Structure probing data (2A3 and DMS) for a 177-nucleotide construct.
Reactivities are given for positions 27 through 126.
The RNA was probed in 150 mM KOAc, 10 mM MgCl2 and 150 mM bicine (pH 8.5) at 24 C.
The DMS profile rests on 2,113 reads.
RNA sequence: GGGAACGACUCGAGUAGAGUCGAAAACAUUUGGUCCCAGAUGCUGAUCUUGAGUCUUUGGGGUGUCAGUGGACUCCUGUGGCAUGGGUCUUCUCUGUGAAUACCCACUCGUAGUGCAGACAGAGGCCGCAGGUGUAUAGUUCGCUAUACACCUGCGAAAAGAAACAACAACAACAAC
Reactivity to 2A3 in 0.01 (KOAc 150mM, MgCl2 10mM, bicine 150mM(pH8.5), 24C), signal-to-noise 1, nucleotides 027 to 126: c020a050u040u100u250g120g020u080c000c020c020a040g000a050u090g030c050u070g000a120u160c050u060u110g060a050g080u030c050u100u090u140g060g020g020g060u080g080u070c020a000g050u040g000g020a020c000u010c050c000u000g030u060g080g000c030a030u040g030g080g000u010c010u000u030c010u050c030u150g120u020g120a010a040u080a110c030c000c020a020c020u030c010g060u020a110g030u030g070c010a000g030a020c010a030g100a000g090g000c000
Reactivity to DMS in 0.01 (KOAc 150mM, MgCl2 10mM, bicine 150mM(pH8.5), 24C), signal-to-noise 2, nucleotides 027 to 126: c110a160u000u000u010g020g010u000c000c000c020a160g000a090u010g010c050u000g020a050u000c060u000u000g000a090g000u000c070u000u010u000g000g000g000g000u000g000u000c120a050g000u000g010g020a050c040u000c020c010u000g020u010g000g000c070a140u000g000g000g020u000c050u000u000c030u010c160u000g000u000g010a060a050u010a090c020c040c020a230c110u010c020g020u010a070g000u000g000c070a070g010a060c060a090g000a070g010g020c100